This 207-nucleotide RNA was probed chemically with 2A3.
The data come from the RNA Mapping Database (RMDB), library OK3TST.
The 2A3 profile rests on 478 reads.
For 2A3 the reverse transcriptase was SuperScript II with manganese.
The reactions ran in a buffer of 150 mM KOAc, 10 mM MgCl2 and 150 mM bicine (pH 8.5), at 24 C.
Reactivities are rounded to 0.1 and cut off at 0 and 3.

RNA sequence: GGGAACGACUCGAGUAGAGUCGAAAAAUCAUACUGUAGUCUUAACCUUCAAUGAGUCAAUAUCGUUAGGCUCAUCUGUCACCUGACGCACUCGUUCAGACUACAGUAUGUGUACGGUCCUUCAAUCAGGUGACAGAUGAGCCUGAUAGAAGGACAACUCAGUACCCUACUUCGGUAGGGUACUGAGAAAAGAAACAACAACAACAAC
Reactivity to 2A3 in 0.01 (KOAc 150mM, MgCl2 10mM, bicine 150mM(pH8.5), 24C), signal-to-noise 1, nucleotides 027 to 156: a000u130c000a010u010a020c040u000g000u000a000g000u030c000u020u000a020a040c040c060u140u180c240a110a140u170g050a040g110u040c040a060a100u170a080u180c090g050u060u060a000g010g010c020u000c030a080u050c000u000g000u000c000a000c010c020u020g050a070c080g030c110a020c140u080c120g000u060u040c000a000g000a000c000u030a000c050a000g020u000a000u000g000u000g040u020a080c080g060g030u000c000c000u100u040c000a040a110u040c000a000g000g000u000g070a020c000a000g020a030u020g000a000g000c000c000u000g040a000u000a000g000a020a050g210g020a020c010a000a080